This 177-nucleotide RNA was probed chemically with DMS. The DMS profile rests on 650 reads.

[RMDB]
RNA sequence: GGGAACGACUCGAGUAGAGUCGAAAAGAUAUGGAGGCAUGAGGCAAGGUCACAAGCAAUAGACAUUAGCUCGGAAACGAGCUAAUGUCUAUUGCUGACUGAUGACCCUCCGCUGCCUCCUAAGUCACGUAAGUUGUUUCUUCGGAAACAACUUACGAAAAGAAACAACAACAACAAC
Reactivity to DMS in 0.01 (KOAc 150mM, MgCl2 10mM, bicine 150mM(pH8.5), 24C), signal-to-noise 1, nucleotides 027 to 126: g030a060u010a300u040g000g020a030g000g010c000a020u040g010a070g000g050c210a050a130g000g000u010c000a070c040a290a080g000c020a050a000u010a010g010a100c010a000u000u010a000g030c000u000c000g000g000a110a150a140c040g000a050g040c000u000a000a000u000g000u010c010u000a000u000u010g000c000u000g020a060c300u000g020a130u030g000a110c300c000c050u000c000c010g000c030u000g010c000c010u000c000c000u000a010a020g020u000c090a260
High DMS reactivity at an A or C suggests that its Watson-Crick edge is free.